RNA sequence: GGGAACGACUCGAGUAGAGUCGAAAAGAUAUGGACACGUAACCGAUAAGCUGCAUUCGGAAACGAAUGGCAGCUUUUGACGGGAGAAGUGUCCUAAGUCAAACAAGUAAGCUUCGGCUUACUUGAAGGUUUUACCUGAGUUCGCUCAGGUAAAACCAAAAGAAACAACAACAACAAC
Reactivity to DMS in 0.01 (KOAc 150mM, MgCl2 10mM, bicine 150mM(pH8.5), 24C), signal-to-noise 1, nucleotides 027 to 126: g000a040u000a300u000g000g000a020c010a010c000g010u010a140a280c000c000g060a150u000a020a010g000c000u010g000c010a030u030u030c010g000g030a090a120a220c010g000a000a010u040g020g000c010a000g000c000u000u000u000u020g010a190c110g000g010g000a060g000a060a170g000u010g050u000c000c010u000a000a100g000u010c010a150a100a270c010a000a020g000u000a000a000g000c000u000u010c230g080g010c000u000u000a000c000u010u000g000a060a130
Chemical mapping of a 177-nucleotide RNA with DMS. For DMS, 762 sequencing reads were counted. Conditions: 150 mM KOAc, 10 mM MgCl2 and 150 mM bicine (pH 8.5), 24 C. The data come from the RNA Mapping Database (RMDB), library TTRDEL.